[RMDB]
RNA sequence: GGGAACGACUCGAGUAGAGUCGAAAAAGCAUGUUAGGUUCGCAUGGUGCACUAUUGUGUUAUUAGUAACUAAGUAAGCUUACAAUCGAAAAUGUUUAACCAUAAAAGGGUAAAAUGGCGUAAGACAGAUACCCUCUGAGCUUCGGCUCAGAGGGAAGGAUUACCCUUAGUUCGCUAAGGGUAAUCCAAAAGAAACAACAACAACAAC
Reactivity to 2A3 in 0.01 (KOAc 150mM, MgCl2 10mM, bicine 150mM(pH8.5), 24C), signal-to-noise 3, nucleotides 027 to 156: a010g050c000a010u030g000u080u050a060g030g020u080u050c020g030c060a050u020g030g020u030g060c030a010c060u120a130u160u150g010u000g030u080u020a080u050u030a040g090u050a070a030c020u000a000a080g080u030a010a070g070c010u020u070a030c020a030a090u110c100g070a030a040a040a060u060g020u030u150u060a030a010c000c000a010u110a160a150a010a010g050g040g000u060a070a060a020a030u040g030g000c000g010u010a050a030g020a040c020a020g060a060u090a100c010c010c000u000c000u000g000a000g000c000u010u100c220g060g010c000u000c000a010g000a000g000g000g000a000a010
Reactivity to DMS in 0.01 (KOAc 150mM, MgCl2 10mM, bicine 150mM(pH8.5), 24C), signal-to-noise 2, nucleotides 027 to 156: a110g000c040a060u000g030u030u000a110g030g000u000u000c050g060c050a080u000g000g000u000g010c080a070c030u010a100u000u000g060u000g010u000u010a080u000u000a120g030u030a060a100c050u000a100a130g020u010a070a070g010c060u000u010a030c060a020a090u000c040g000a130a050a050a090u010g010u000u000u010a100a070c010c030a030u000a010a050a100a140g020g010g010u000a050a120a020a030u000g020g020c000g000u010a050a120g000a070c020a050g000a130u000a060c110c000c000u010c000u000g000a030g030c010u000u000c300g070g030c000u010c030a000g030a000g000g000g030a010a000